[RMDB]
RNA sequence: GGGAACGACUCGAGUAGAGUCGAAAAAGGCACAUCUCGAUCAGCCGCUGACGCUACAGACGCUGGCGGCGGAAGCGGGGCUUAGCGAGUUUCACUUUGCACGCAUGUUUCGCCAGAGUGUGGGAAUGGCACCGCAUCAGUAUGUGCUGAAACAGCGACGUUAUUCUGAUUUCGAUCAGAAUAACGUAAAAGAAACAACAACAACAAC
Reactivity to 2A3 in 0.01 (KOAc 150mM, MgCl2 10mM, bicine 150mM(pH8.5), 24C), signal-to-noise 5, nucleotides 027 to 156: a000g070g000c020a010c000a020u030c020u060c100g020a060u040c040a020g010c010c020g000c020u040g140a100c110g030c030u170a150c090a210g100a070c040g030c030u020g000g000c010g010g020c000g000g010a040a010g020c010g020g030g040g000c040u070u060a030g040c040g080a050g060u040u150u090c030a040c040u060u020u100g050c050a040c080g020c040a100u130g050u080u150u090c040g010c000c010a030g010a040g060u050g000u060g030g030g030a130a160u160g050g000c020a020c030c000g050c000a060u070c000a020g060u140a030u040g010u030g000c020u020g000a030a030a000c040a010g070c040g070
Reactivity to DMS in 0.01 (KOAc 150mM, MgCl2 10mM, bicine 150mM(pH8.5), 24C), signal-to-noise 2, nucleotides 027 to 156: a240g010g010c010a060c030a040u000c040u020c070g060a230u010c030a100g010c000c000g040c000u000g010a040c030g010c030u000a210c240a200g000a060c000g040c020u000g000g030c030g020g030c000g020g050a060a170g050c000g000g010g000g030c030u010u000a090g020c050g020a170g000u020u020u010c040a070c000u000u000u000g000c050a080c010g010c090a180u020g020u010u000u000c050g050c050c000a090g010a130g000u000g010u010g020g020g010a080a130u000g000g000c010a110c000c010g000c050a110u000c040a080g000u000a050u000g020u000g000c000u010g000a080a060a100c080a110g000c000g010